Chemical mapping of a 177-nucleotide RNA with DMS and 2A3. Reactivities are given for positions 27 through 126. The RNA was probed in 150 mM KOAc, 10 mM MgCl2 and 150 mM bicine (pH 8.5) at 24 C. The DMS profile rests on 7,560 reads. DMS adducts were read by reverse transcription with MarathonRT.
[RMDB]
RNA sequence: GGGAACGACUCGAGUAGAGUCGAAAAGAUAUGGAUGGUACUACCCACCGAACUACUGCCUUAUUCGGAAACGAAUAAGCGCAGCGAGGUACCAUCCUAAGUCAAAAGCCCUUCUUCGGAAGGGCAACAAUAUUCACCACUUCGGUGGUGAAUAUUGAAAAGAAACAACAACAACAAC
Reactivity to DMS in 0.01 (KOAc 150mM, MgCl2 10mM, bicine 150mM(pH8.5), 24C), signal-to-noise 6, nucleotides 027 to 126: g010a060u010a050u000g010g000a000u000g000g020u000a010c010u000a130c110c100c080a300c150c070g000a050a080c120u020a300c010u000g000c000c010u000u000a000u000u010c000g000g010a040a040a050c000g010a010a000u000a010a000g010c300g020c000a000g000c090g010a130g010g010u000a020c000c000a000u000c000c000u000a000a080g000u010c060a050a080a110a160g010c000c000c000u000u000c000u000u020c200g010g000a010a000g000g010g000c010a000a010
Reactivity to 2A3 in 0.01 (KOAc 150mM, MgCl2 10mM, bicine 150mM(pH8.5), 24C), signal-to-noise 3, nucleotides 027 to 126: g020a010u050a030u070g000g010a000u010g020g000u020a010c010u080a090c010c090c120a110c100c090g070a160a140c120u240a050c000u260g010c000c000u000u010a000u010u000c000g020g000a020a010a010c010g000a000a010u010a000a000g010c090g000c070a000g090c030g050a040g000g010u000a000c000c000a000u000c000c000u000a000a010g030u030c030a010a060a120a080g000c000c000c000u000u010c010u030u050c150g150g000a000a000g000g000g000c000a000a000